[RMDB]
RNA sequence: GGGAACGACUCGAGUAGAGUCGAAAAAAUAAGCUAUACUGACUGAAACAACUGCAUCCUUUAAAAAUUCAUUCCAAUCCUGCGAAUUAUUCGACUUUGGAUGCAAAAGAUUUAUAGAUGGAGCUAACUACACACCUACCUUCGGGUAGGUGUGUAGAAAAGAAACAACAACAACAAC
Reactivity to 2A3 in 0.01 (KOAc 150mM, MgCl2 10mM, bicine 150mM(pH8.5), 24C), signal-to-noise 1, nucleotides 027 to 126: a000a050u300a080a000g010c100u120a070u130a210c030u150g090a000c010u040g030a040a280a000c070a080a080c130u000g000c000a000u000c000c000u000u000u150a000a200a000a000a000u060u130c020a000u000u000c020c020a000a010u070c010c010u060g030c020g000a000a060u040u040a000u100u100c040g060a100c180u060u010u000g010g000a000u000g000c000a030a030a030a030g040a040u090u210u060a160u040a030g030a090u030g050g030a040g000c000u060a070a000
The record gives the reactivity of an RNA of 177 nucleotides to 2A3. The 2A3 profile rests on 392 reads. The RNA was probed in 150 mM KOAc, 10 mM MgCl2 and 150 mM bicine (pH 8.5) at 24 C. The data come from the RNA Mapping Database (RMDB), library OK1LIB.